RNA sequence: GGGAACGACUCGAGUAGAGUCGAAAAGGGCGCAGUGGCUCACACCUGUAAUCCCAGCACGUUGGGAGGCCAAGGCGGGCGGAUCACCUGAGGUCAGGAAUUCAAGACCAGCCUGGCCAAUAUGGCGGUUACGUACUCAAUUCGUUGAGUACGUAACAAAAGAAACAACAACAACAAC
Reactivity to 2A3 in 0.01 (KOAc 150mM, MgCl2 10mM, bicine 150mM(pH8.5), 24C), signal-to-noise 4, nucleotides 027 to 126: g020g010g010c050g000c050a050g080u080g100g000c020u040c030a050c010a020c010c020u020g050u100a050a050u040c010c000c000a020g010c060a030c100g110u130u050g030g000g000a010g000g000c000c030a030a040g020g000c020g010g000g000c040g000g020a030u060c070a180c300c000u010g030a060g000g140u200c010a010g000g040a030a020u150u100c070a150a100g080a130c000c000a000g020c000c000u010g010g000c000c010a010a000u180a110u130g040g000c040g030
Reactivity to DMS in 0.01 (KOAc 150mM, MgCl2 10mM, bicine 150mM(pH8.5), 24C), signal-to-noise 8, nucleotides 027 to 126: g010g000g000c060g020c080a090g020u000g010g000c030u000c040a080c070a080c030c010u000g010u000a070a080u000c010c000c010a110g010c080a040c110g010u000u000g000g010g010a060g010g010c020c020a040a070g000g010c030g000g010g030c040g010g000a040u000c060a040c020c040u000g010a170g010g010u010c010a010g000g000a100a070u000u000c090a080a100g010a080c030c040a080g010c000c000u000g000g000c010c000a030a060u000a090u000g010g010c080g010
The record gives the reactivity of an RNA of 177 nucleotides to 2A3 and DMS. For 2A3, 7,457 sequencing reads were counted. Values cover nucleotides 27 to 126. The RNA was probed in 150 mM KOAc, 10 mM MgCl2 and 150 mM bicine (pH 8.5) at 24 C.